RNA sequence: GGGAACGACUCGAGUAGAGUCGAAAACAAUAGGAGACCCAUGGAGAGUAUCCAGAGGUUGCUAAGGCCUCGAUCGCGCCUGCCGGGAGAAAAGCAGAAUGUCCCGGUUCUCCAAAUAAGACGUCAACCAGUAAAUGGGUUUCGACCCAUUUACUGGAAAAGAAACAACAACAACAAC
Reactivity to 2A3 in 0.01 (KOAc 150mM, MgCl2 10mM, bicine 150mM(pH8.5), 24C), signal-to-noise 4, nucleotides 027 to 126: c020a000a160u110a170g030g010a000g020a030c010c030c020a030u010g000g010a030g010a010g020u280a040u070c010c030a020g010a020g020g000u040u100g040c060u160a050a060g020g000c000c000u030c010g030a060u040c020g010c010g020c030c010u020g000c010c000g000g030g010a040g050a050a110a020a010g080c120a030g050a260a070u160g110u060c000c000c000g000g000u010u020c020u000c000c000a000a070a000u130a030a010g090a020c070g050u070c040a060a060
Reactivity to DMS in 0.01 (KOAc 150mM, MgCl2 10mM, bicine 150mM(pH8.5), 24C), signal-to-noise 3, nucleotides 027 to 126: c120a110a110u060a060g010g000a040g000a060c030c040c050a200u010g020g010a020g000a140g030u020a060u000c070c040a090g010a100g000g040u010u000g000c140u030a060a130g000g000c050c010u000c000g000a090u010c090g010c130g000c010c030u000g010c000c000g020g000g010a120g000a100a070a060a150g000c210a160g030a080a110u000g010u000c000c010c010g010g000u000u000c000u000c000c040a120a130a110u090a040a080g000a040c120g000u010c100a110a190